[RMDB]
RNA sequence: GGGAACGACUCGAGUAGAGUCGAAAAUAAAAUAAAUAAAAUAAAAAUUUGCUCAUUGGUUUGCGGAAACCUCUCACGUGUGACGUUGAAGUUUCUAUGGGCAGUAAUUCUGCAAGAGGCCGGUUUCGACUGGUCAAAAGAAACAACAACAACAAC
Reactivity to 2A3 in 0.01 (KOAc 150mM, MgCl2 10mM, bicine 150mM(pH8.5), 24C), signal-to-noise 6, nucleotides 027 to 135: u050a010a030a030a030u270a090a080a040u300a110a090a130a000u300a130a160a070a090a120u140u160u070g010c010u010c020a030u060u070g220g050u300u170u220g080c020g000g000a000a000a020c000c000u000c010u010c010a020c010g070u180g150u170g170a020c020g000u030u020g030a110a060g000u000u010u000c020u020a040u020g020g010g000c000a000g000u020a010a110u110u080c030u050g040c020a080a000g050a090g130g000c010c010g020g030u000u070u080c150g080a040c010u000g000g000u010c020a070
Reactivity to DMS in 0.01 (KOAc 150mM, MgCl2 10mM, bicine 150mM(pH8.5), 24C), signal-to-noise 2, nucleotides 027 to 135: u020a080a080a060a070u060a050a070a160u070a100a050a100a110u040a030a090a040a080a110u020u010u000g000c020u000c010a040u010u020g030g000u030u000u000g010c130g010g010a020a000a010c010c000u010c010u000c030a020c060g010u020g020u020g010a020c080g020u000u000g000a010a300g020u000u000u010c000u010a040u000g020g010g020c000a030g000u010a060a080u020u000c020u010g000c040a050a100g000a190g000g030c020c030g030g030u000u010u050c160g010a020c000u000g070g010u000c010a020